[RMDB]
RNA sequence: GGGAACGACUCGAGUAGAGUCGAAAAAGUGAGGUUACGACCUCACAACCGUUCACUCUUCUCGUCAGUCGAUGAUUGAAUUUCGAAUGUCAGAACAGUGCGCGAGAAGCUAGUCUACGGACUAGCAGGUUAGAUCUCCGUUCGCGGAGAUCUAACCAAAAGAAACAACAACAACAAC
Reactivity to 2A3 in 0.01 (KOAc 150mM, MgCl2 10mM, bicine 150mM(pH8.5), 24C), signal-to-noise 5, nucleotides 027 to 126: a000g000u000g010a010g020g020u050u060a080c250g070a040c070c000u000c000a000c000a000a010c010c000g020u010u000c000a000c000u030c000u020u010c020u030c030g080u020c040a040g000u000c040g020a030u030g010a030u030u230g070a110a180u100u060u020c020g020a050a040u030g040u080c030a050g000a070a040c020a090g050u030g010c040g010c020g040a060g070a110a030g000c000u000a010g010u000c000u020a040c280g040g000a000c000u000a000g000c000a000
Reactivity to DMS in 0.01 (KOAc 150mM, MgCl2 10mM, bicine 150mM(pH8.5), 24C), signal-to-noise 2, nucleotides 027 to 126: a190g000u040g000a000g010g010u010u000a070c270g020a060c000c060u010c000a030c000a100a050c080c190g020u000u000c000a000c000u030c150u000u010c000u000c080g010u000c130a040g000u000c000g000a070u020g000a180u010u000g000a130a050u020u050u000c010g000a070a070u000g000u040c070a010g000a020a020c000a050g070u000g000c010g010c150g000a150g020a120a100g000c000u000a000g050u000c000u000a160c200g010g000a000c000u010a000g000c000a020
Record summary:
Chemical mapping of a 177-nucleotide RNA with 2A3 and DMS. For 2A3 the reverse transcriptase was SuperScript II with manganese. Source: RMDB libraries RFM100 and RFMREP, as collected in RNAgym.